Source information:
An RNA of 177 nucleotides, treated with 2A3 and DMS and read out base by base.

RNA sequence: GGGAACGACUCGAGUAGAGUCGAAAAGUUGACGCGGAGCAGUCCUCCGAGGUCCAGCUGCUUGACACAAAGAUUAACAUGCUUAGCGUAUUGUUGCUGGGAGACGUCGUGUUGAGUGCGUCAUUGACGCCAGGGCAUGAUUCGUCAUGCCCUGGCGAAAAGAAACAACAACAACAAC
Reactivity to 2A3 in 0.01 (KOAc 150mM, MgCl2 10mM, bicine 150mM(pH8.5), 24C), signal-to-noise 1, nucleotides 027 to 126: g060u090u050g000a020c000g000c000g000g000a010g000c080a030g160u120c000c000u000c000c010g010a050g040g110u000c050c020a000g010c030u020g000c010u020u010g000a010c000a010c020a120a190a030g060a090u130u120a120a020c060a060u230g000c020u040u070a010g000c020g060u060a110u130u300g080u120u050g000c000u000g000g000g010a030g000a040c040g040u110c030g000u000g040u020u040g040a060g000u160g010c010g000u030c040a160u010u140g010a010
Reactivity to DMS in 0.01 (KOAc 150mM, MgCl2 10mM, bicine 150mM(pH8.5), 24C), signal-to-noise 3, nucleotides 027 to 126: g000u010u000g020a000c000g030c010g010g010a040g040c100a180g000u010c160c020u010c010c040g000a080g010g010u000c030c070a080g000c030u000g020c050u000u000g020a050c060a010c060a110a090a080g000a100u000u010a070a090c170a120u000g000c000u010u000a050g010c060g000u000a110u010u020g000u000u000g020c050u010g010g000g010a070g010a100c110g000u010c050g000u000g040u000u000g010a040g020u000g010c090g010u000c030a170u000u000g010a190
Description:
For 2A3, 1,132 sequencing reads were counted. The DMS profile rests on 2,937 reads.